[RMDB]
RNA sequence: GGGAACGACUCGAGUAGAGUCGAAAAGCCACCACAUUUCUGGCAAGAAAUAGAGGGUAUUUCAUACUGAAAAACUUAUCGUAUGCUUGGAGGGUAGCUUCAUUUUCUUGGAACGUAGUGCAGCUGCGAUUCGUACAUCAUUCGUGAUGUACGAAUCAAAAGAAACAACAACAACAAC
Reactivity to 2A3 in 0.01 (KOAc 150mM, MgCl2 10mM, bicine 150mM(pH8.5), 24C), signal-to-noise 4, nucleotides 027 to 126: g050c000c010a030c000c000a060c000a090u060u110u030c050u050g110g000c080a080a000g010a030a080a010u130a050g060a050g070g030g010u040a080u030u120u060c060a060u100a210c090u130g070a000a030a010a080a060c060u150u090a150u210c040g030u080a030u090g070c040u070u040g060g010a050g070g020g000u020a010g020c010u050u050c030a070u050u060u050u040c050u020u050g080g030a070a020c040g020u050a020g010u060g110c020a020g010c010u030g020c020
Reactivity to DMS in 0.01 (KOAc 150mM, MgCl2 10mM, bicine 150mM(pH8.5), 24C), signal-to-noise 5, nucleotides 027 to 126: g000c040c020a080c030c030a090c120a060u000u000u000c020u000g000g010c110a070a050g000a040a030a040u000a110g010a090g000g000g000u000a060u000u000u000c030a100u010a090c170u010g010a030a030a060a090a080c100u000u010a100u010c050g010u000a030u000g000c080u010u010g010g010a070g000g000g010u000a040g010c040u000u020c060a080u010u000u010u010c040u010u000g010g010a090a070c100g030u000a030g020u000g010c070a090g000c050u000g020c190